[RMDB]
Structure probing data (2A3) for a 177-nucleotide construct. 2A3 adducts were read by reverse transcription with SuperScript II with manganese. Conditions: 150 mM KOAc, 10 mM MgCl2 and 150 mM bicine (pH 8.5), 24 C.
RNA sequence: GGGAACGACUCGAGUAGAGUCGAAAAGAAGACGUGACGAAAAGUCACGAAAAAGAGCUAGCAAGCGCCAGCUAGCAAAGAUCGAAAGAUCAAAUGGCGCAAAGUGCAGGGAGACCUGCACAAAAGAGCGGCUAAUUACGUUCGCGUAAUUAGCCGCAAAAGAAACAACAACAACAAC
Reactivity to 2A3 in 0.01 (KOAc 150mM, MgCl2 10mM, bicine 150mM(pH8.5), 24C), signal-to-noise 1, nucleotides 027 to 126: g180a070a010g240a000c000g000u020g000a010c000g100a010a000a000a300g000u000c000a000c020g010a020a060a000a000a000g210a000g000c000u000a000g000c000a280a090g000c010g000c000c000a000g000c000u000a000g010c040a180a110a000g010a000u020c020g000a000a020a020g000a000u000c000a000a000a000u040g000g000c000g000c000a010a010a010g000u000g050c000a000g000g000g000a110g050a160c040c000u000g080c000a000c000a020a020a020a020g100a030